[RMDB]
RNA sequence: GGGAACGACUCGAGUAGAGUCGAAAACAGGUGGGGAGUUUGGCUGGGGCGGCACAUUUGUUAAAAGAUAACGCAAGUGUCCAAAGGCAGGCUCAGUGAGAACAGAAAUCUCACGUAGAGUAAAAGGUUGCAUGGCUGUAUUCGUACAGCCAUGCAAAAAAGAAACAACAACAACAAC
Reactivity to DMS in 0.01 (KOAc 150mM, MgCl2 10mM, bicine 150mM(pH8.5), 24C), signal-to-noise 1, nucleotides 027 to 126: c110a060g000g030u030g000g110g010g000a050g080u000u120u000g000g000c010u050g110g000g000g000c280g000g020c150a000c000a090u070u000u080g000u000u000a050a140a130a260g000a230u080a180a150c240g000c060a000a020g100u000g010u000c090c010a070a120a190g000g100c100a140g060g000c060u000c020a160g000u000g000a000g000a010a170c070a100g100a100a030a070u000c000u000c030a000c000g090u030a000g060a050g010u000a100a040a070a050g000g000